Structure probing data (DMS and 2A3) for a 207-nucleotide construct. Reactivities are given for positions 27 through 156. The 2A3 profile rests on 1,622 reads.

[RMDB]
RNA sequence: GGGAACGACUCGAGUAGAGUCGAAAAAGCACUGGUACGAUACGUCGUACCAGUGCAGUCGUUGGGAUGGAACGCAAUAAAAUACAUGUGUGACGUGUAUUUGCGAACGACGUAAUUAUUUUUCAAAAUCACGCUAUCGUGUUCGCACGAUAGCGAAGACUACGAACAACUUCGGUUGUUCGUAGUCAAAAGAAACAACAACAACAAC
Reactivity to DMS in 0.01 (KOAc 150mM, MgCl2 10mM, bicine 150mM(pH8.5), 24C), signal-to-noise 1, nucleotides 027 to 156: a040g010c000a010c000u010g020g000u000a010c000g020a050u010a100c300g080u000c030g030u000a040c000c010a000g030u000g030c000a010g010u010c070g030u020u000g000g020g030a120u000g000g040a050a230c020g010c010a110a190u010a080a030a040a070u020a010c010a040u000g010u010g000u010g040a070c050g090u000g000u000a010u030u030u000g010c100g000a040a110c010g010a210c040g010u000a030a130u000u000a130u000u010u010u020u000c050a040a080a130a110u000c120a200c050g060c000u000a000u000c010g030u020g000u000u010c300g000c000a010c000g000a030u000a010g000c000g010a020a000
Reactivity to 2A3 in 0.01 (KOAc 150mM, MgCl2 10mM, bicine 150mM(pH8.5), 24C), signal-to-noise 3, nucleotides 027 to 156: a020g000c000a010c010u000g010g020u040a020c020g010a010u010a060c220g100u000c000g010u000a010c010c000a000g000u000g030c000a000g000u020c010g010u010u020g140g060g030a110u090g040g070a090a060c020g000c020a010a060u150a210a090a020a000u040a000c010a000u000g110u010g150u210g190a090c030g010u010g000u010a010u000u020u060g000c010g000a010a000c010g040a000c040g040u040a140a000u150u200a100u040u080u020u020u050c040a000a020a060a080u150c030a000c090g000c000u010a010u000c000g000u000g000u060u030c040g050c020a010c000g000a000u000a000g000c000g000a000a000
The DMS profile rests on 1,848 reads.